[RMDB]
RNA sequence: GGGAACGACUCGAGUAGAGUCGAAAACUGCGCUCCGCGGAGCCGGAUAUCGACUAGGGCGUGUCUGCAUUCAACGUAACCAGAUCAUAGCGCAUGCGAGAUGGACGAAGCCCAUGAAUGCGGUCAACGCCAUCGUAUUAUUCGUAAUACGAUGGCGAAAAGAAACAACAACAACAAC
Reactivity to 2A3 in 0.01 (KOAc 150mM, MgCl2 10mM, bicine 150mM(pH8.5), 24C), signal-to-noise 3, nucleotides 027 to 126: c030u020g030c030g000c070u020c020c000g040c160g120g030a020g030c020c000g030g000a040u050a020u180c040g020a040c040u070a060g020g080g000c010g010u030g020u020c020u040g000c020a020u010u000c020a060a070c040g020u060a060a110c010c000a020g010a080u060c020a060u100a070g030c040g000c090a030u170g020c010g020a110g010a050u040g000g010a010c030g040a070a020g020c010c040c000a010u040g020a000a010u010g000c020g000g020u050c030a030a050
Reactivity to DMS in 0.01 (KOAc 150mM, MgCl2 10mM, bicine 150mM(pH8.5), 24C), signal-to-noise 4, nucleotides 027 to 126: c080u010g000c120g020c030u010c000c050g020c280g030g000a050g020c040c020g010g000a070u000a080u000c020g020a030c020u020a110g010g010g020c010g040u000g010u010c000u000g000c010a010u000u000c030a060a190c190g020u010a040a170c050c040a130g000a130u000c030a040u000a170g020c020g000c070a050u010g000c040g010a060g000a120u000g000g000a070c110g000a110a150g030c020c070c030a130u000g000a020a020u000g000c020g000g000u000c060a070a070
Chemical mapping of a 177-nucleotide RNA with 2A3 and DMS.
2A3 adducts were read by reverse transcription with SuperScript II with manganese.
The DMS profile rests on 2,914 reads.
DMS adducts were read by reverse transcription with MarathonRT.
In probing experiments dimethyl sulfate is read out at A N1 and C N3, which are open when not base-paired.